[RMDB]
The record gives the reactivity of an RNA of 177 nucleotides to DMS and 2A3. Conditions: 150 mM KOAc, 10 mM MgCl2 and 150 mM bicine (pH 8.5), 24 C. 2A3 adducts were read by reverse transcription with SuperScript II with manganese. DMS adducts were read by reverse transcription with MarathonRT.
RNA sequence: GGGAACGACUCGAGUAGAGUCGAAAAUGCUGAUCGCGCGCGCCAACGUGCUGCGCUUCUCCGAGGCCCUGGCCUACCACCUGCACGAUGAGCGCUACGGCUUCGUGCAGAUGCCCCAGCGCAUAACGUUAUCCUGAAGGUUCGCCUUCAGGAUAACAAAAGAAACAACAACAACAAC
Reactivity to DMS in 0.01 (KOAc 150mM, MgCl2 10mM, bicine 150mM(pH8.5), 24C), signal-to-noise 5, nucleotides 027 to 126: u010g020c050u000g000a070u000c110g020c060g030c050g010c050g000c050c070a060a160c200g000u010g010c040u000g030c040g010c030u000u010c040u000c030c050g030a080g010g010c030c030c060u010g020g020c020c020u000a110c160c010a030c050c000u000g020c010a020c040g010a070u010g000a060g010c040g010c080u010a110c180g010g000c010u010u010c000g020u000g000c000a030g000a030u000g000c040c030c040c040a070g010c080g020c060a100u010a070a110c160
Reactivity to 2A3 in 0.01 (KOAc 150mM, MgCl2 10mM, bicine 150mM(pH8.5), 24C), signal-to-noise 4, nucleotides 027 to 126: u090g000c040u070g030a130u110c050g000c010g000c010g000c020g030c070c030a190a120c120g040u110g040c070u080g010c020g020c010u060u030c040u000c030c030g010a070g070g000c020c020c080u110g060g000c010c010u050a080c010c040a030c010c000u010g000c030a010c040g060a040u110g110a030g080c050g020c150u130a050c070g090g000c000u010u010c010g010u030g010c000a010g000a020u030g010c010c000c010c010a010g020c030g000c050a040u090a160a050c060